[RMDB]
RNA sequence: GGGAACGACUCGAGUAGAGUCGAAAAACCGGCGUGCCGCCGAUCGCUACGGUUCCUCUGGAUGGUUUCAAUGUGCCGGAAAGCACGUUAAGAAGCGUCGACUUGCCAGCUCCAUUUUCCCCAACGAAUAUAGCGACUAUUUCGAUAGUCGCUAUAUAAAAGAAACAACAACAACAAC
Reactivity to DMS in 0.01 (KOAc 150mM, MgCl2 10mM, bicine 150mM(pH8.5), 24C), signal-to-noise 6, nucleotides 027 to 126: a090c050c010g010g010c050g010u010g000c060c060g000c070c080g000a030u010c040g000c030u010a070c070g010g010u000u000c020c010u000c040u020g010g020a080u010g010g000u000u010u020c050a070a040u010g010u010g000c020c010g030g050a100a150a130g000c010a010c010g020u000u010a080a100g010a060a050g010c040g010u010c020g010a110c080u010u010g000c020c020a080g000c040u000c030c040a100u010u010u000u010c010c000c010c110a080a100c250g000a110
Reactivity to 2A3 in 0.01 (KOAc 150mM, MgCl2 10mM, bicine 150mM(pH8.5), 24C), signal-to-noise 9, nucleotides 027 to 126: a000c010c000g020g010c040g050u110g050c020c030g030c010c010g030a060u070c040g020c040u050a050c030g040g010u050u050c020c010u030c050u050g070g020a050u070g110g040u040u040u050c030a070a030u080g010u030g020c020c030g140g070a070a000a000g020c020a010c020g010u040u050a200a060g060a070a010g030c000g040u030c020g020a090c020u040u060g020c010c010a030g010c020u010c020c010a060u060u030u020u040c010c000c000c000a070a050c070g120a140
Chemical mapping of a 177-nucleotide RNA with DMS and 2A3. High 2A3 reactivity points to a flexible backbone, as in loops and unpaired stretches. For DMS the reverse transcriptase was MarathonRT. For 2A3 the reverse transcriptase was SuperScript II with manganese. Reactivities are rounded to 0.1 and cut off at 0 and 3. For DMS, 18,728 sequencing reads were counted. High DMS reactivity at an A or C suggests that its Watson-Crick edge is free. The 2A3 profile rests on 13,673 reads. Values cover nucleotides 27 to 126.